The record gives the reactivity of an RNA of 177 nucleotides to DMS and 2A3. For 2A3 the reverse transcriptase was SuperScript II with manganese. Source: RMDB library OK1LIB, as collected in RNAgym. For DMS, 1,809 sequencing reads were counted. Values cover nucleotides 27 to 126. Conditions: 150 mM KOAc, 10 mM MgCl2 and 150 mM bicine (pH 8.5), 24 C.
RNA sequence: GGGAACGACUCGAGUAGAGUCGAAAAGCAACUCCAUACAGUCUUGUGUUCAAAAGGCAGUGGCUCAAAGUACGAGUGUACAAAACGUAUCUGCUAAAAUUUCACAAGCGGCAACGUCUGAAGCAAAACAAAAUAGGCGUUUCGACGCCUAUUUUGUAAAAGAAACAACAACAACAAC
Reactivity to DMS in 0.01 (KOAc 150mM, MgCl2 10mM, bicine 150mM(pH8.5), 24C), signal-to-noise 2, nucleotides 027 to 126: g030c080a060a110c050u000c010c020a070u100a070c110a110g010u000c040u000u040g030u000g000u000u030c250a120a030a090a080g000g020c000a000g010u070g010g000c060u000c080a120a120a140g010u000a020c000g000a120g000u050g010u030a000c020a000a030a150a150c250g000u020a100u000c010u000g000c030u000a000a090a080a010u000u000u000c000a020c020a000a040g010c070g000g010c070a000a060c020g020u060c030u000g010a140a040g000c110a100a010a060
Reactivity to 2A3 in 0.01 (KOAc 150mM, MgCl2 10mM, bicine 150mM(pH8.5), 24C), signal-to-noise 3, nucleotides 027 to 126: g010c010a020a110c030u000c040c000a000u080a150c000a020g080u050c000u020u050g010u010g010u060u090c050a020a010a040a020g020g050c020a020g000u030g090g020c040u050c180a160a130a010g010u030a020c020g070a130g180u300g030u110a010c040a010a240a020a000c030g040u050a090u030c000u010g000c030u270a030a100a140a210u010u070u070c000a030c000a030a030g020c000g010g000c050a080a030c110g030u000c040u150g080a100a010g050c030a120a030a000